This 177-nucleotide RNA was probed chemically with 2A3 and DMS. It was measured as part of the RMDB library OK1LIB. For DMS the reverse transcriptase was MarathonRT. For 2A3, 1,160 sequencing reads were counted. The DMS profile rests on 1,245 reads.
RNA sequence: GGGAACGACUCGAGUAGAGUCGAAAAGUCGCAACGAGUGCGCGACGGUACUCGAAGGCUAGGAGCUUCGGAUUCUAGCGACCGAAGAAAGGAUAUCGAAUAGUGUUGAACGGUAUCCGCAACACAAGGCAUGCUUCGCGUUCGCGUGAAGCAUGCCAAAAGAAACAACAACAACAAC
Reactivity to 2A3 in 0.01 (KOAc 150mM, MgCl2 10mM, bicine 150mM(pH8.5), 24C), signal-to-noise 2, nucleotides 027 to 126: g050u040c020g000c010a020a020c040g090a040g040u070g020c060g010c010g190a040c100g030g010u030a050c000u010c030g070a090a040g110g000c000u070a040g000g130a010g000c000u000u000c030g060g000a110u020u060c000u020a060g060c060g020a000c000c000g030a040a030g000a080a050a030g020g000a000u000a000u000c000g000a080a070u070a150g090u140g080u100u140g020a080a000c000g010g010u000a000u000c000c020g000c000a120a140c010a000c010a090a140
Reactivity to DMS in 0.01 (KOAc 150mM, MgCl2 10mM, bicine 150mM(pH8.5), 24C), signal-to-noise 1, nucleotides 027 to 126: g020u000c040g000c060a070a210c100g030a100g050u050g010c030g000c150g000a110c080g010g000u000a060c060u000c000g010a110a220g000g000c000u000a000g000g000a010g000c020u010u040c160g020g000a050u010u000c000u000a050g010c070g000a080c010c000g000a080a030g080a240a070a040g000g010a010u000a000u000c020g010a070a260u000a100g000u000g000u000u000g000a080a280c000g000g000u000a000u000c000c000g060c180a070a010c230a090c190a020a090